[RMDB]
RNA sequence: GGGAACGACUCGAGUAGAGUCGAAAAGCUAGUCGGAGACGACUAGCAACGAUCAGUUCGCUGAUCGGAAGGUGCAUUCAAAUACGCUAGAAGCACCAAUAUACGACGCCUAGCGUAAAACUGAGAAAGCAGAUAACAAAAAUAAAAAGGCGUCGGGCUCACGUAAUAAUUUCGAUUAUUACGUGAGAAAAGAAACAACAACAACAAC
Reactivity to DMS in 0.01 (KOAc 150mM, MgCl2 10mM, bicine 150mM(pH8.5), 24C), signal-to-noise 2, nucleotides 027 to 156: g020c000u000a010g000u010c000g030g020a300g030a220c000g010a040c010u000a020g040c010a020a040c000g010a020u010c010a010g000u000u030c300g040c020u010g010a030u020c000g000g050a070a070g010g030u000g030c020a230u000u000c060a090a080a190u000a020c030g040c000u000a260g000a070a150g000c020a040c030c000a060a070u020a090u000a060c000g020a030c000g050c010c010u000a040g000c030g030u000a020a080a110a090c060u000g010a290g000a210a100a170g030c040a100g000a230u020a090a250c100a050a020a130a070a100u010a010a050a050a070a020g010g030c030g020u000c000g010g020g010
Reactivity to 2A3 in 0.01 (KOAc 150mM, MgCl2 10mM, bicine 150mM(pH8.5), 24C), signal-to-noise 5, nucleotides 027 to 156: g010c000u000a000g000u010c000g030g010a040g010a080c010g010a000c000u000a000g010c000a000a000c000g000a000u010c000a000g030u060u080c140g010c100u010g000a010u000c010g000g030a070a060g000g000u010g040c110a300u010u030c000a010a030a070u060a040c010g000c010u010a010g000a020a010g000c000a000c000c000a010a000u160a000u020a050c000g000a000c000g000c000c010u010a010g000c000g000u030a020a050a100a070c010u020g020a030g150a210a110a000g150c050a000g060a070u140a170a070c090a060a090a080a030a020u190a100a080a040a010a010g000g000c000g000u000c000g000g000g000
An RNA of 207 nucleotides, treated with DMS and 2A3 and read out base by base.
Conditions: 150 mM KOAc, 10 mM MgCl2 and 150 mM bicine (pH 8.5), 24 C.
The 2A3 profile rests on 3,789 reads.
Values cover nucleotides 27 to 156.
DMS adducts were read by reverse transcription with MarathonRT.